Chemical mapping of a 207-nucleotide RNA with DMS and 2A3. For 2A3 the reverse transcriptase was SuperScript II with manganese. For DMS, 1,606 sequencing reads were counted.

RNA sequence: GGGAACGACUCGAGUAGAGUCGAAAAGAGGCGCUUCGGCGCCUCAGGCGAUCCUAAGUCCUCGACAUGUCGGAUGCAAGGGAGUCGGAAACGACGAGGAUCUUGUGCAUCCGACAACAGCGAGGAUAUGGAAUAAGAACCGGUUUCGACCGGUUAAUCAAGGGCUAGAAUUCGUUCUAGCCCUUGAAAAAGAAACAACAACAACAAC
Reactivity to DMS in 0.01 (KOAc 150mM, MgCl2 10mM, bicine 150mM(pH8.5), 24C), signal-to-noise 1, nucleotides 027 to 156: g000a060g040g050c000g010c030u000u000c240g030g070c010g020c000c000u000c000a000g020g030c110g000a170u000c010c000u000a060a300g000u030c000c000u000c010g000a100c110a300u010g010u000c050g030g000a010u000g000c010a010a010g000g010g030a130g020u030c050g030g020a250a020a190c060g010a040c050g020a100g010g000a150u000c040u020u000g000u000g010c020a040u000c000c010g020a000c000a090a020c070a050g000c050g070a080g040g000a010u000a030u030g000g000a170a090u010a100a150g020a050a010c000c000g030g000u000u000u000c290g010a130c010c000g010g000u000u000a000a140
Reactivity to 2A3 in 0.01 (KOAc 150mM, MgCl2 10mM, bicine 150mM(pH8.5), 24C), signal-to-noise 1, nucleotides 027 to 156: g010a000g010g000c000g000c000u030u030c270g110g020c000g000c010c000u000c010a000g010g000c050g110a070u040c000c000u000a090a020g020u000c010c000u030c000g100a180c040a030u070g000u020c000g030g000a000u010g000c000a000a000g020g000g030a030g000u000c000g050g080a210a110a000c050g000a000c000g000a170g050g000a000u020c030u090u190g060u040g070c000a000u000c000c010g000a000c000a000a000c000a050g010c000g000a000g000g000a000u000a000u000g000g010a040a040u150a150a020g170a020a010c030c010g030g020u000u290u020c110g060a030c000c050g210g000u260u300a100a020